RNA sequence: GGGAACGACUCGAGUAGAGUCGAAAAAUGAAAUACUAUUUCCUCAAUAGGCUCAUUCAUCUCACUAACAGCAGUGAUAUUAAUAAUCUUCAUUAUCUGAGAAGCAUUCGCAUCAAAACGAGAAGUAUCUGCAGUAGAACUGACAAGCACAAACCUAUCAUAUUGCCACGUUCGCGUGGCAAUAUGAAAAAGAAACAACAACAACAAC
Reactivity to 2A3 in 0.01 (KOAc 150mM, MgCl2 10mM, bicine 150mM(pH8.5), 24C), signal-to-noise 3, nucleotides 027 to 156: a010u090g020a030a020a010u170a030c010u010a030u030u070u060c010c030u050c020a030a010u040a060g040g000c010u000c050a010u070u000c020a100u040c010u010c010a020c030u100a160a030c060a160g090c030a020g010u010g060a030u000a020u150u070a070a100u070a040a050u020c020u090u030c040a070u000u190a060u110c070u070g060a010g020a090a000g010c040a050u090u060c050g010c040a040u040c080a090a050a080a030c050g030a010g000a070a000g010u030a020u010c020u020g000c020a010g010u130a030g010a050a020c030u020g030a030c040a030a010g050c010a020c020a020a070a000c010c020u030a030
Reactivity to DMS in 0.01 (KOAc 150mM, MgCl2 10mM, bicine 150mM(pH8.5), 24C), signal-to-noise 1, nucleotides 027 to 156: a050u010g020a060a100a190u010a120c060u000a120u000u010u000c060c030u000c040a120a010u010a060g010g030c050u000c030a060u000u000c050a060u000c060u000c040a150c060u000a150a080c030a120g050c060a070g000u000g000a100u000a110u000u000a130a110u000a110a020u010c060u000u020c050a040u020u000a050u000c080u000g000a130g010a160a110g000c060a070u000u010c030g000c060a050u000c040a040a060a110a030c050g000a060g010a060a060g000u010a060u000c050u000g010c040a030g020u010a010g010a060a060c030u000g010a010c020a070a010g000c010a030c060a040a040a100c070c070u010a230